[RMDB]
Record summary
Chemical mapping of a 177-nucleotide RNA with 2A3 and DMS. Reactivities are rounded to 0.1 and cut off at 0 and 3. For 2A3 the reverse transcriptase was SuperScript II with manganese. DMS adducts were read by reverse transcription with MarathonRT. The RNA was probed in 150 mM KOAc, 10 mM MgCl2 and 150 mM bicine (pH 8.5) at 24 C. For DMS, 1,296 sequencing reads were counted. It was measured as part of the RMDB library OK1LIB.

RNA sequence: GGGAACGACUCGAGUAGAGUCGAAAAUAUACAUCAGAAGUCGGCACAACUCCCGACUCGCGGUGAGCGAUGCAGCGUAGCGCGAGCUACGCAGCUGCUGUGCGGAUGGCUAGCCCAUGCUAGCCUACAGCCUACUAGCCUUCGGGCUAGUAGGCUGAAAAGAAACAACAACAACAAC
Reactivity to 2A3 in 0.01 (KOAc 150mM, MgCl2 10mM, bicine 150mM(pH8.5), 24C), signal-to-noise 1, nucleotides 027 to 126: u050a000u020a030c100a080u030c000a030g130a110a000g080u070c040g050g050c160a020c040a300a300c190u050c000c000c000g000a000c030u020c000g000c050g070g010u190g010a000g000c010g060a070u220g010c000a020g000c040g000u010a020g020c000g050c020g040a010g070c000u020a000c000g000c020a000g010c000u000g000c050u040g010u090g130c020g000g040a080u250g010g000c000u000a000g000c030c100c000a000u100g000c010u000a000g000c040c000u000a050
Reactivity to DMS in 0.01 (KOAc 150mM, MgCl2 10mM, bicine 150mM(pH8.5), 24C), signal-to-noise 2, nucleotides 027 to 126: u010a000u040a260c050a010u000c080a060g020a120a030g010u050c010g010g010c190a170c030a040a240c300u090c070c020c000g040a050c010u000c080g010c300g030g040u010g040a110g010c050g000a070u030g040c020a030g000c000g020u000a000g020c000g000c300g010a070g040c000u000a000c020g000c020a000g020c000u000g030c000u050g030u010g020c010g000g000a100u000g060g000c030u020a060g000c000c210c140a080u050g050c020u000a040g000c000c000u020a020